Conditions: 150 mM KOAc, 10 mM MgCl2 and 150 mM bicine (pH 8.5), 24 C. The record gives the reactivity of an RNA of 177 nucleotides to DMS and 2A3. For DMS, 1,416 sequencing reads were counted. The data come from the RNA Mapping Database (RMDB), library TTRDEL. 2A3 adducts were read by reverse transcription with SuperScript II with manganese. For DMS the reverse transcriptase was MarathonRT.

[RMDB]
RNA sequence: GGGAACGACUCGAGUAGAGUCGAAAAGAUAUGGAUAAAGAGUGUAGGGAGCUGUCGCUCGGAAACGAGCGAGUAGCUUUGAUCUACAUCCUAAGUCAAAACUAUGUCCUGUUCGCAGGACAUAGAAGUUAGGAUCCUUGUUCGCAAGGAUCCUAACAAAAGAAACAACAACAACAAC
Reactivity to DMS in 0.01 (KOAc 150mM, MgCl2 10mM, bicine 150mM(pH8.5), 24C), signal-to-noise 2, nucleotides 027 to 126: g000a110u000a100u010g010g010a030u000a040a240a080g000a060g020u000g010u020a020g010g010g000a000g030c000u000g000u000c000g000c000u010c020g000g010a060a130a170c010g000a020g010c000g000a010g010u020a000g030c000u000u000u010g000a030u010c010u000a010c030a010u000c020c000u000a060a300g020u000c010a090a050a110a120c000u000a010u000g010u000c000c030u020g000u010u030c180g000c010a000g000g000a010c000a000u000a000g010a030a080
Reactivity to 2A3 in 0.01 (KOAc 150mM, MgCl2 10mM, bicine 150mM(pH8.5), 24C), signal-to-noise 2, nucleotides 027 to 126: g080a030u230a070u300g060g030a020u070a170a300a070g110a060g090u110g050u090a030g020g050g020a030g020c020u020g000u070c030g000c000u000c000g010g010a030a060a040c010g010a000g000c010g000a020g020u020a000g000c000u280u140u040g020a020u020c000u010a000c000a000u090c000c000u010a090a060g030u050c020a030a000a110a210c020u000a000u000g000u000c000c000u000g020u050u030c230g030c080a010g040g000a000c000a000u000a000g000a000a000